[RMDB]
RNA sequence: GGGAACGACUCGAGUAGAGUCGAAAAUUAUUUUUAACUUUUAUCAGGGCUAGCUUUUGGGUAAUUGAUAAAAGUUUGCGAUAAAUUACUUCACUAACGUAUCGCUUCGCUGAGUGCGCUCCGAAGCCUUACAAAUUAGGUUCGCCUAAUUUGUAAGAAAAGAAACAACAACAACAAC
Reactivity to DMS in 0.01 (KOAc 150mM, MgCl2 10mM, bicine 150mM(pH8.5), 24C), signal-to-noise 3, nucleotides 027 to 126: u010u000a010u000u000u000u010u000a010a010c000u000u000u000u000a010u010c010a020g010g010g020c080u000a100g010c160u000u010u010u010g040g000g020u010a020a100u010u000g010a020u010a010a020a020a030g010u000u000u010g010c120g000a030u000a010a030a100u000u010a070c160u000u000c080a080c110u010a050a060c220g010u000a070u010c120g000c020u000u000c020g010c140u020g010a060g010u000g020c170g010c040u010c020c010g000a030a020g010c050
Reactivity to 2A3 in 0.01 (KOAc 150mM, MgCl2 10mM, bicine 150mM(pH8.5), 24C), signal-to-noise 2, nucleotides 027 to 126: u010u000a020u000u060u000u000u040a010a030c000u020u070u000u010a010u010c000a050g030g120g020c020u040a060g030c040u190u140u300u300g060g000g010u130a120a140u130u100g000a010u090a000a000a060a050g000u000u000u060g000c000g000a010u020a030a060a050u120u030a060c040u060u120c060a080c200u100a210a040c040g110u130a070u180c040g000c000u010u000c050g030c110u090g010a010g030u050g000c160g000c050u000c030c010g000a010a000g000c010
This 177-nucleotide RNA was probed chemically with DMS and 2A3. The data come from the RNA Mapping Database (RMDB), library RFMREP. The reactions ran in a buffer of 150 mM KOAc, 10 mM MgCl2 and 150 mM bicine (pH 8.5), at 24 C.